An RNA of 177 nucleotides, treated with DMS and 2A3 and read out base by base. The RNA was probed in 150 mM KOAc, 10 mM MgCl2 and 150 mM bicine (pH 8.5) at 24 C.
[RMDB]
RNA sequence: GGGAACGACUCGAGUAGAGUCGAAAAGAUAUGCCGCAGAGAUCGCACAUAACGUGUCAGCGCAGAAGCGCAAGGUCAUUGUGGAGCGCGCUCGUGAGCUGAACAUCAAUGUCACCAACGGUGACGCCAGACGUCCUUCUUUCGAGAAGGACGUCUGAAAAGAAACAACAACAACAAC
Reactivity to DMS in 0.01 (KOAc 150mM, MgCl2 10mM, bicine 150mM(pH8.5), 24C), signal-to-noise 2, nucleotides 027 to 126: g000a120u000a080u010g000c060c030g000c030a090g030a130g030a040u000c080g020c020a020c060a040u000a040a070c140g020u000g000u000c010a120g000c000g040c040a120g000a130a080g010c000g000c000a090a300g020g010u000c060a080u020u000g010u000g000g000a080g000c060g000c070g030c010u000c010g000u000g000a160g000c000u000g000a050a050c150a070u000c180a140a080u010g010u020c000a010c000c050a110a160c260g010g060u010g010a030c010g010c300
Reactivity to 2A3 in 0.01 (KOAc 150mM, MgCl2 10mM, bicine 150mM(pH8.5), 24C), signal-to-noise 2, nucleotides 027 to 126: g050a020u090a010u200g030c000c020g000c070a020g030a000g020a080u060c050g060c020a060c010a030u160a080a010c090g060u060g040u090c030a030g050c030g000c020a030g170a300a050g000c030g000c060a080a060g140g020u070c000a040u080u100g060u070g070g000a140g020c050g000c010g000c000u040c030g100u100g010a040g000c030u040g050a010a030c020a030u120c010a020a110u170g030u040c010a000c020c000a150a090c130g050g000u000g020a000c010g000c010
For 2A3 the reverse transcriptase was SuperScript II with manganese. The DMS profile rests on 1,140 reads. The data come from the RNA Mapping Database (RMDB), library OK2TST.